RNA sequence: GGGAACGACUCGAGUAGAGUCGAAAAAGAGUGUACGCACUCACUUCGCUGACCACCUCGGCGAAGAAAGUGUUCGGGAAACAACGACUUACGCGCCUAGUAAAUGUCUCGUUUCCCGCUCCAAUAAAUGUAAUCCGCAGUUCGCUGCGGAUUACAUAAAAGAAACAACAACAACAAC
Reactivity to DMS in 0.01 (KOAc 150mM, MgCl2 10mM, bicine 150mM(pH8.5), 24C), signal-to-noise 2, nucleotides 027 to 126: a130g010a030g000u000g000u000a060c290g000c000a010c000u000c110a210c000u040u010c000g000c050u010g000a110c060c140a090c150c170u030c000g000g010c000g010a000a000g000a110a050a010g040u000g000u000u000c010g020g000g000a030a000a000c000a070a300c300g050a000c030u020u020a000c060g000c120g010c090c200u040a070g020u000a010a090a080u040g000u000c000u000c300g000u000u010u000c000c000c000g000c040u000c040c050a060a110u010a010a110
Reactivity to 2A3 in 0.01 (KOAc 150mM, MgCl2 10mM, bicine 150mM(pH8.5), 24C), signal-to-noise 3, nucleotides 027 to 126: a020g070a020g010u090g020u070a030c220g000c020a010c010u010c020a060c000u040u000c000g030c000u000g030a090c040c010a120c010c090u040c020g030g000c000g010a000a000g010a020a000a000g170u150g010u020u070c030g010g010g000a000a020a000c010a000a050c050g000a000c000u030u030a020c010g130c020g110c070c130u050a020g030u030a000a100a240u240g020u060c020u020c060g000u010u000u010c000c000c010g000c010u000c000c020a040a120u160a220a230
This 177-nucleotide RNA was probed chemically with DMS and 2A3. 2A3 is a SHAPE reagent: it acylates the 2'-hydroxyl of flexible nucleotides of all four kinds. Source: RMDB library RFM100, as collected in RNAgym.